Annotation:
The record gives the reactivity of an RNA of 177 nucleotides to 2A3 and DMS. Conditions: 150 mM KOAc, 10 mM MgCl2 and 150 mM bicine (pH 8.5), 24 C. Values are in units of 0.01, from 0 to 300, in steps of 10. The data come from the RNA Mapping Database (RMDB), library TTRDES. In probing experiments dimethyl sulfate is read out at A N1 and C N3, which are open when not base-paired. For 2A3 the reverse transcriptase was SuperScript II with manganese.
RNA sequence: GGGAACGACUCGAGUAGAGUCGAAAAGAUAUGGAUGCCUCUGGGAGAAGUGUUCGGAAACGAACAUACUUCGCCGGUGAAAUACCAGAUGCAUCCUAAGUCAAAGCCCCAGGUUCGCCUGGGGCAACCUACACAGAAUGUUCGCAUUCUGUGUAGGAAAAGAAACAACAACAACAAC
Reactivity to 2A3 in 0.01 (KOAc 150mM, MgCl2 10mM, bicine 150mM(pH8.5), 24C), signal-to-noise 3, nucleotides 027 to 126: g000a010u000a020u060g010g000a000u010g030c030c030u000c010u040g030g040g030a140g020a060a020g030u000g010u030u010c010g010g000a010a020a000c000g000a010a000c010a020u200a110c030u010u010c000g050c060c150g300g120u300g110a170a200a020u120a050c030c040a010g000a010u020g010c000a000u010c010c000u000a000a000g000u010c000a000a000a230g000c010c000c000c000a010g050g060u050u100c270g120c120c000u000g000g000g000g000c000a000a010
Reactivity to DMS in 0.01 (KOAc 150mM, MgCl2 10mM, bicine 150mM(pH8.5), 24C), signal-to-noise 3, nucleotides 027 to 126: g030a020u000a030u010g000g010a010u010g000c000c090u000c010u000g000g000g000a040g020a010a010g020u000g000u000u000c000g000g000a020a000a020c000g010a000a020c000a070u010a080c020u000u000c010g040c300c300g020g020u050g000a120a060a080u000a300c000c000a010g010a000u000g000c010a010u000c000c000u010a000a050g000u010c010a150a170a190g020c010c000c000c010a040g000g000u010u010c300g030c010c000u000g000g000g020g030c010a000a010